The record gives the reactivity of an RNA of 207 nucleotides to 2A3 and DMS. The reactions ran in a buffer of 150 mM KOAc, 10 mM MgCl2 and 150 mM bicine (pH 8.5), at 24 C. For DMS the reverse transcriptase was MarathonRT. For 2A3, 1,901 sequencing reads were counted. The data come from the RNA Mapping Database (RMDB), library OK3TST.
[RMDB]
RNA sequence: GGGAACGACUCGAGUAGAGUCGAAAAUGUGCUCAAAAGGCAGUGAGACCUUGUGAAAGUAACCUUACUUCUCUGAGCCACUUUCCCCACUAGUAACAUACAGAUAAUAGUGAAGUUUCCAUUUCACAGGGUCAUUAUGGGGAUUAAAUAACUGCAAACGUGCAAAAUCAUUCGUGAUUUUGCACGUAAAAGAAACAACAACAACAAC
Reactivity to 2A3 in 0.01 (KOAc 150mM, MgCl2 10mM, bicine 150mM(pH8.5), 24C), signal-to-noise 4, nucleotides 027 to 156: u080g000u090g010c000u010c020a040a010a040a040g080g000c020a010g030u010g050a090g000a010c000c000u010u000g010u010g010a040a050a060g070u100a060a080c030c060u090u120a110c060u050u120c080u000c050u070g010a000g030c040c020a010c000u020u030u010c010c000c010c020a020c010u050a010g050u160a140a040c040a110u280a060c040a070g110a130u110a150a030u060a120g010u020g020a090a020g000u020u050u090c090c090a080u020u000u020c000a010c010a000g000g000g000u010c010a010u030u100a050u110g020g000g000g000a010u030u110a060a090a040u080a060a030c020u000g000c000a120a050
Reactivity to DMS in 0.01 (KOAc 150mM, MgCl2 10mM, bicine 150mM(pH8.5), 24C), signal-to-noise 2, nucleotides 027 to 156: u000g010u000g040c040u020c010a070a070a180a140g010g050c030a020g030u000g020a160g010a070c010c000u010u000g030u000g000a040a040a050g000u000a070a080c080c030u000u000a040c040u000u000c080u000c020u000g000a130g000c030c010a020c050u000u000u000c010c010c020c040a060c080u010a080g000u000a080a120c030a180u010a190c080a100g030a110u000a070a110u000a050g030u000g020a030a070g000u000u000u010c040c060a160u000u000u000c020a030c010a030g000g020g010u000c000a100u000u000a030u010g010g000g010g030a150u000u000a040a050a140u010a120a080c030u000g000c070a040a100